Conditions: 150 mM KOAc, 10 mM MgCl2 and 150 mM bicine (pH 8.5), 24 C. This 207-nucleotide RNA was probed chemically with 2A3. For 2A3, 1,346 sequencing reads were counted. Reactivities are given for positions 27 through 156. The data come from the RNA Mapping Database (RMDB), library OK3TST.
RNA sequence: GGGAACGACUCGAGUAGAGUCGAAAACGCGCGUCAUGGUCGCGGCGAACACGCGCGGCGCUCGCAAGGCGGAGGCGAAAGACAAGGCGCUGACGCGGGCGAUCGGGGCCGGCCGUGGUUGAGGUCGUCGAGCCGCCGGACGGCGAGACUCUGGCGGGUCAUACAUAUCCUUCGGGAUAUGUAUGACAAAAGAAACAACAACAACAAC
Reactivity to 2A3 in 0.01 (KOAc 150mM, MgCl2 10mM, bicine 150mM(pH8.5), 24C), signal-to-noise 1, nucleotides 027 to 156: c000g020c000g000c020g020u090c050a130u060g040g030u050c000g000c010g050g020c010g050a150a030c050a020c060g020c010g000c010g040g000c000g000c000u010c000g030c050a070a060g040g000c000g010g040a060g080g100c030g100a190a030a020g110a060c070a080a130g140g050c010g000c000u020g030a030c110g000c000g010g010g020c000g010a000u020c030g000g020g020g070c040c000g000g020c020c010g030u110g040g030u010u040g020a000g040g030u050c000g010u000c010g020a010g030c010c000g010c000c000g020g060a030c120g020g000c030g000a060g010a060c040u020c030u060g000g000c000g000g010